[RMDB]
RNA sequence: GGGAACGACUCGAGUAGAGUCGAAAAUCCGUUGUGCAACAAUAGUUGAUCAGGUCUUCGCCAACGGUUGGACAUGCAGUGCCUGCUUUUAGGUCUAUGCAAGACUUUUGCAUCCAAUUGCUGAGUCUACACCGAAGACCUUCGGGUCUUCGGUGUAAAAAGAAACAACAACAACAAC
Reactivity to DMS in 0.01 (KOAc 150mM, MgCl2 10mM, bicine 150mM(pH8.5), 24C), signal-to-noise 1, nucleotides 027 to 126: u010c020c000g000u000u010g020u000g030c030a110a070c090a110a160u000a180g020u000u000g000a070u000c140a050g000g020u000c070u000u000c070g000c020c000a050a070c070g000g020u000u000g020g000a050c030a160u010g000c040a050g030u000g000c020c000u000g010c110u020u020u000u000a040g010g000u000c070u000a120u000g020c140a150a020g020a040c040u000u020u000u000g030c040a010u000c060c180a080a080u000u000g000c010u000g000a060g000u000c040
This 177-nucleotide RNA was probed chemically with DMS. Values are in units of 0.01, from 0 to 300, in steps of 10.